[RMDB]
RNA sequence: GGGAACGACUCGAGUAGAGUCGAAAAAGCGAAAAUGGUCAUUAUAGGAUCCUACCCUGAUUUGACCGAACCCCGUUCCGUGACCGUGGGCGAGGAGCGCGUGAGCGAGGAAUAUGGGACACAUGCCGUAGAUACGUAUAUUCGUAUACGUAUCUACAAAAGAAACAACAACAACAAC
Reactivity to 2A3 in 0.01 (KOAc 150mM, MgCl2 10mM, bicine 150mM(pH8.5), 24C), signal-to-noise 9, nucleotides 027 to 126: a000g210c160g100a100a070a010a070u200g010g000u000c010a020u020u130a090u130a230g030g020a050u090c020c050u140a160c030c000c000u070g120a230u030u020u060g010a010c000c000g010a060a070c010c000c000c000g010u050u010c020c010g040u050g100a110c000c030g040u080g020g050g020c030g010a060g030g040a060g040c030g000c020g030u100g040a030g010c040g010a080g020g050a060a020u160a100u160g030g010g030a010c020a000c010a070u140g070c040c050
Reactivity to DMS in 0.01 (KOAc 150mM, MgCl2 10mM, bicine 150mM(pH8.5), 24C), signal-to-noise 9, nucleotides 027 to 126: a070g010c120g010a050a050a060a090u040g000g010u000c000a020u010u010a140u030a020g000g000a090u020c080c060u010a130c140c010c000u010g010a130u010u010u000g000a010c010c000g010a100a140c040c010c000c030g010u000u000c020c010g020u020g000a100c060c040g010u010g000g000g020c050g000a090g000g000a080g010c050g010c050g010u030g000a090g000c030g010a090g000g000a080a070u020a050u020g000g000g010a080c080a050c080a060u020g010c100c130
This 177-nucleotide RNA was probed chemically with 2A3 and DMS. The RNA was probed in 150 mM KOAc, 10 mM MgCl2 and 150 mM bicine (pH 8.5) at 24 C. The 2A3 profile rests on 64,906 reads. It was measured as part of the RMDB library OK1LIB.